[RMDB]
Overview: Conditions: 150 mM KOAc, 10 mM MgCl2 and 150 mM bicine (pH 8.5), 24 C. This 177-nucleotide RNA was probed chemically with DMS and 2A3. The 2A3 profile rests on 2,067 reads.
RNA sequence: GGGAACGACUCGAGUAGAGUCGAAAAGUGAUGGUGAUGCGGUCUUUCUCAUACUGAUACGUGUAGCUUAAGCCCGCCGGGUUUAGCUGUUCUGUCACCCGCCCGUCACUGUCGUAACGGUAACGGAGCUUAGCUCCUACUUCGGUAGGAGCUAAGCAAAAGAAACAACAACAACAAC
Reactivity to DMS in 0.01 (KOAc 150mM, MgCl2 10mM, bicine 150mM(pH8.5), 24C), signal-to-noise 3, nucleotides 027 to 126: g010u000g010a000u000g000g010u020g020a080u000g020c070g030g000u000c090u010u000u010c080u000c060a150u000a110c160u000g010a020u000a020c160g030u000g000u010a030g010c020u010u020a060a020g000c000c000c010g020c170c190g020g020g010u000u000u000a030g000c000u000g000u000u000c030u000g010u010c040a080c190c040c060g000c040c040c000g000u010c000a030c000u000g000u000c180g000u010a080a150c110g010g000u000a050a100c050g020g000a220
Reactivity to 2A3 in 0.01 (KOAc 150mM, MgCl2 10mM, bicine 150mM(pH8.5), 24C), signal-to-noise 2, nucleotides 027 to 126: g130u080g000a000u030g000g020u040g020a060u100g030c090g030g040u070c040u020u200u030c120u030c050a080u140a240c090u100g080a040u030a070c070g010u010g030u040a000g000c020u130u110a000a010g000c030c010c020g040c110c090g040g000g000u020u000u000a020g020c010u010g060u020u020c010u020g070u000c020a070c070c040c020g000c000c030c000g010u020c000a010c000u030g040u000c010g010u010a120a080c020g040g110u050a060a010c030g020g030a060